An RNA of 207 nucleotides, treated with 2A3 and read out base by base. The 2A3 profile rests on 1,455 reads. 2A3 adducts were read by reverse transcription with SuperScript II with manganese.
RNA sequence: GGGAACGACUCGAGUAGAGUCGAAAACGAUCAGUACGUUCGCGUACUGAUCGAAGCUACUGGAGACAGUAGCAAGUCUAAGACCUUGUUAGGCUCAAACAAGGAAAAAUGGAGGAAGGCCGGACCUCCAUACUUAGACAAGGGCCAACCGGCCAACCCCAGGAUUUAGUUUCGACUAAAUCCUGGGAAAAGAAACAACAACAACAAC
Reactivity to 2A3 in 0.01 (KOAc 150mM, MgCl2 10mM, bicine 150mM(pH8.5), 24C), signal-to-noise 2, nucleotides 027 to 156: c000g000a000u000c000a010g000u000a000c020g020u020u110c230g000c000g080u010a000c000u000g000a000u000c000g000a000a000g000c000u000a000c000u000g010g010a050g000a050c000a000g000u000a000g010c010a020a020g010u020c000u000a010a030g010a130c000c000u010u000g030u020u030a100g090g070c060u060c110a010a010a010c000a000a010g010g000a040a120a070a000a010u020g010g010a000g030g040a100a180g010g000c010c070g040g000a190c000c000u000c000c000a000u010a020c000u010u000a000g000a000c030a040a080g060g040g060c090c020a020a000c000c010g020g000c000c000a010a030c010
It was measured as part of the RMDB library OK3TST.